RNA sequence: GGGAACGACUCGAGUAGAGUCGAAAACUGAUGGGUGCCCCUGCCAUACCUAACUCAAGUUUUCCAGACUUGACCAAUCAUCAUCAUUUCUAGCCAUAGAAAAGGAAAGAGUUCGCUGGGCCCCGCGGCUCGUGCCUAUAAUCCCAGCACCUUGGGAUGAGGAGGAUUUAUUCGUAAAUCCUCCUCAAAAAGAAACAACAACAACAAC
Reactivity to DMS in 0.01 (KOAc 150mM, MgCl2 10mM, bicine 150mM(pH8.5), 24C), signal-to-noise 1, nucleotides 027 to 156: c020u010g010a080u010g020g010g040u000g020c000c010c020c060u000g020c050c060a130u010a050c050c030u010a190a170c030u000c010a140a100g050u000u000u000u000c030c070a200g000a090c010u000u010g000a000c020c010a220a110u010c050a090u000c000a020u010c040a300u010u000u010c010u000a060g040c220c110a180u000a060g000a040a030a070a110g040g000a050a080a130g000a060g000u000u010c070g000c030u000g020g010g030c020c000c000c040g010c090g040g010c010u000c070g010u010g010c000c020u000a100u010a110a110u000c010c000c070a030g000c020a110c060c040u000u000g000g000g030a160
Reactivity to 2A3 in 0.01 (KOAc 150mM, MgCl2 10mM, bicine 150mM(pH8.5), 24C), signal-to-noise 2, nucleotides 027 to 156: c030u040g020a080u100g070g040g000u060g020c000c000c030c040u030g010c010c020a070u070a190c000c050u090a100a110c030u030c010a020a010g000u000u000u020u140c070c010a040g000a030c020u040u040g030a040c000c050a100a050u050c000a020u020c020a000u000c030a060u070u030u070c040u040a060g050c020c010a140u080a100g060a030a060a020a010g020g020a060a090a060g070a020g000u160u250c030g000c000u010g010g000g060c010c030c000c060g000c000g010g000c050u010c080g080u090g020c000c010u160a120u080a070a050u120c010c020c000a020g010c040a130c230c010u020u010g060g030g040a000
Description:
Chemical mapping of a 207-nucleotide RNA with DMS and 2A3. The 2A3 profile rests on 792 reads. The data come from the RNA Mapping Database (RMDB), library OK3TST. For 2A3 the reverse transcriptase was SuperScript II with manganese.